The data come from the RNA Mapping Database (RMDB), library M2RFPK. An RNA of 207 nucleotides, treated with 2A3 and DMS and read out base by base. Values are in units of 0.01, from 0 to 300, in steps of 10. The reactions ran in a buffer of 150 mM KOAc, 10 mM MgCl2 and 150 mM bicine (pH 8.5), at 24 C. The DMS profile rests on 4,744 reads. For 2A3, 4,396 sequencing reads were counted. For DMS the reverse transcriptase was MarathonRT.
RNA sequence: GGGAACGACUCGAGUAGAGUCGAAAAAUGGCGAAUGCAUGGGGAACUACAUCUGUGUCGCGAGUUCGAUUCUCGCCAGGGCCUGGUCCUGUAGCUCAGAUGGUAGAGCAAGCUGUUCCCCGGACACAAAAUCCAGCUAGGUUCGCCUAGCUGGAAACUAGAUUUGUUUGUUCGCAAACAAAUCUAGAAAAGAAACAACAACAACAAC
Reactivity to 2A3 in 0.01 (KOAc 150mM, MgCl2 10mM, bicine 150mM(pH8.5), 24C), signal-to-noise 1, nucleotides 027 to 156: a000u090g080g000c050g080a120a050u130g020c060a080u100g000g010g000g010a000a020c010u060a020c030a040u020c010u010g040u020g090u150c050g000c000g010a000g010u050u150c060g030a060u140u000c000u000c000g000c010c010a000g010g000g010c030c270u200g050g060u020c000c010u020g030u070a030g030c000u010c020a010g000a060u040g040g080u080a050g030a030g070c040a050a020g030c010u050g010u010u020c000c000c000c010g010g000a030c040a000c010a040a120a000a050u000c000c010a000g000c000u000a000g020g000u030u020c100g050c050c010u000a000g000c000u000g030g000a000a000a000
Reactivity to DMS in 0.01 (KOAc 150mM, MgCl2 10mM, bicine 150mM(pH8.5), 24C), signal-to-noise 3, nucleotides 027 to 156: a110u000g000g000c020g010a110a040u010g010c040a150u010g010g010g010g020a050a090c010u000a050c010a040u000c010u000g010u000g030u000c060g040c010g020a040g010u000u010c120g000a300u000u010c010u000c000g000c030c050a070g030g020g000c020c120u010g060g010u000c000c000u020g000u000a080g020c000u010c020a070g000a080u000g020g000u000a060g010a080g020c050a120a150g000c040u020g030u000u010c010c000c000c070g010g010a060c070a110c090a090a040a120a140u010c010c000a000g000c010u000a000g030g030u000u010c300g030c000c010u000a010g020c000u000g010g020a000a000a060